[RMDB]
This 207-nucleotide RNA was probed chemically with 2A3 and DMS. Values cover nucleotides 27 to 156. It was measured as part of the RMDB library OK3TST. The reactions ran in a buffer of 150 mM KOAc, 10 mM MgCl2 and 150 mM bicine (pH 8.5), at 24 C.
RNA sequence: GGGAACGACUCGAGUAGAGUCGAAAAAUGGGGGCAGUUUUCCCCAUGCUGUUCUGAUGAUAGUGAGUGAGUUCUCAUAUGAUCUGAUGGUUUUAUAAGCGUCUGGCAUUUCCCCUGCUGGCACUCAUUCUCUCUCCUGCUGUCCUGUGAAGAGGUGCUAUGUAUCUUAUUUCGAUAAGAUACAUAGAAAAGAAACAACAACAACAAC
Reactivity to 2A3 in 0.01 (KOAc 150mM, MgCl2 10mM, bicine 150mM(pH8.5), 24C), signal-to-noise 4, nucleotides 027 to 156: a020u030g010g000g010g000g000c030a080g070u070u040u070u100c000c000c000c000a010u030g020c020u040g040u100u040c030u040g060a060u030g020a030u050a080g120u060g030a020g010u080g050a070g030u200u040c020u010c020a020u050a030u120g050a030u000c010u030g030a040u050g040g090u080u080u080u080a140u060a080a070g030c020g070u060c070u080g000g000c010a030u020u030u090c010c010c010c020u020g010c000u010g020g010c030a000c020u040c010a050u180u010c040u000c010u000c000u010c040c000u010g050c020u030g040u050c010c020u050g010u030g030a040a020g040a020g020g020u000g020
Reactivity to DMS in 0.01 (KOAc 150mM, MgCl2 10mM, bicine 150mM(pH8.5), 24C), signal-to-noise 3, nucleotides 027 to 156: a110u000g000g010g030g050g050c140a120g010u010u000u000u010c010c000c010c060a070u000g010c000u000g020u000u000c040u000g000a130u000g010a120u000a060g030u000g020a070g030u000g000a140g050u000u000c030u000c030a100u000a070u000g010a060u000c040u010g000a120u000g020g010u000u000u000u000a080u000a080a090g010c060g010u000c030u000g020g020c010a130u000u000u000c010c010c030c170u000g010c020u000g000g030c040a030c030u000c010a080u000u000c030u000c030u000c020u000c010c040u010g020c030u000g020u000c030c020u020g030u010g010a060a090g000a080g030g030u000g020